[RMDB]
RNA sequence: GGGAACGACUCGAGUAGAGUCGAAAAGCACCUAGAUUAGUUCUUCUCAUGCAAAGGGCAAAAUGCCAAGACUUAUGUGUUCUUGGGCUGGAAGAGUGCAAUUAUAGUCCCUUUCAAAAUGAAGUAAUAUCCGAUUAUACUUCGGUAUAAUCGGAUAAAAAGAAACAACAACAACAAC
Reactivity to 2A3 in 0.01 (KOAc 150mM, MgCl2 10mM, bicine 150mM(pH8.5), 24C), signal-to-noise 2, nucleotides 027 to 126: g040c050a010c010c040u050a060g080a250u080u210a020g110u060u020c000u010u010c020u000c020a080u060g000c130a000a060a000g010g010g000c000a060a060a020a040u150g000c000c000a010a000g000a000c010u200u160a140u300g170u080g120u220u090c000u000u010g090g070g040c060u010g080g070a090a030g100a050g080u090g000c000a090a090u140u000a050u120a060g090u220c000c000c000u000u070u000c050a070a100a070a100u090g010a030a040g040u080a070a070
Reactivity to DMS in 0.01 (KOAc 150mM, MgCl2 10mM, bicine 150mM(pH8.5), 24C), signal-to-noise 4, nucleotides 027 to 126: g030c120a070c020c020u000a110g000a160u000u000a170g010u010u000c000u000u010c020u000c170a160u000g000c170a030a040a000g000g000g010c060a070a030a080a110u010g010c010c010a020a020g010a020c010u000u020a070u000g010u000g010u010u000c010u000u000g020g010g010c020u000g020g010a150a090g010a120g010u000g010c090a090a080u000u000a090u000a110g000u010c000c000c000u000u000u000c060a080a080a080a050u010g000a010a060g010u010a070a160